Conditions: 150 mM KOAc, 10 mM MgCl2 and 150 mM bicine (pH 8.5), 24 C. Chemical mapping of a 177-nucleotide RNA with 2A3 and DMS. For 2A3, 974 sequencing reads were counted.

[RMDB]
RNA sequence: GGGAACGACUCGAGUAGAGUCGAAAAAAUGCUGAUUUACCACAGUGGCAACUAAUUUUUCUUCAUUUACUGUUUACUGCCAGAAAUCAGCUAAAUCGAUUUCAUAAUUUUAGGAACCAUAGAAAAACAUAAGUUUAUCCUUCGGGAUAAACUUAUGAAAAGAAACAACAACAACAAC
Reactivity to 2A3 in 0.01 (KOAc 150mM, MgCl2 10mM, bicine 150mM(pH8.5), 24C), signal-to-noise 1, nucleotides 027 to 126: a010a050u120g000c000u020g010a020u000u000u060a160c010c010a000c000a020g000u020g010g010c000a010a010c060u040a050a070u040u050u160u200u090c040u180u100c040a060u030u050u060a030c000u000g030u030u100u150a010c030u020g100c080c000a050g080a030a010a000u020c010a000g000c000u000a000a000a040u080c070g020a040u040u120u010c020a020u090a190a180u070u100u070u140a020g030g100a020a040c030c020a030u090a170g090a030a070a020a000a000
Reactivity to DMS in 0.01 (KOAc 150mM, MgCl2 10mM, bicine 150mM(pH8.5), 24C), signal-to-noise 2, nucleotides 027 to 126: a130a070u010g000c010u000g000a030u000u000u000a110c130c210a140c010a010g040u010g040g010c010a020a070c140u000a020a020u000u000u000u020u020c150u070u030c140a020u010u010u010a030c060u000g000u000u000u000a020c060u000g000c040c070a270g000a100a000a000u010c000a010g030c010u000a030a060a080u010c100g000a080u000u000u010c050a060u010a040a080u010u000u000u010a060g000g000a050a080c040c010a120u010a140g000a060a050a090a040a190